This 207-nucleotide RNA was probed chemically with 2A3. For 2A3, 740 sequencing reads were counted.
RNA sequence: GGGAACGACUCGAGUAGAGUCGAAAAGAGGCUCUGUGACUUGCCCAAGGUCACAUGGCUACAAGGAGGGACACUUGGGUCAUCAGACUUGGACCCUGCUUUUCACCACUGAGUCCGACUUGGUGCAGCCCAGGCUGGGGACCAUUUACUAUGCAGCUGACAAUCGGAAUUUCGAUUCCGAUUGUCAAAAAGAAACAACAACAACAAC
Reactivity to 2A3 in 0.01 (KOAc 150mM, MgCl2 10mM, bicine 150mM(pH8.5), 24C), signal-to-noise 1, nucleotides 027 to 156: g150a010g010g000c000u000c020u000g050u020g000a020c000u070u120g040c030c000c000a030a000g010g020u000c000a010c010a030u030g020g000c000u100a070c070a010a010g060g060a030g000g050g020a030c020a000c100u060u050g010g000g040u010c000a030u030c050a030g010a040c070u010u100g000g000a020c010c000c010u040g010c000u080u130u060u100c110a040c020c000a000c010u030g030a010g070u020c080c080g050a110c130u000u090g050g000u050g000c040a030g060c000c000c070a010g010g000c010u030g000g000g000g060a050c000c000a040u000u030u050a060c070u030a040u110g020c000a000g030c000
Source: RMDB library OK3TST, as collected in RNAgym. Conditions: 150 mM KOAc, 10 mM MgCl2 and 150 mM bicine (pH 8.5), 24 C.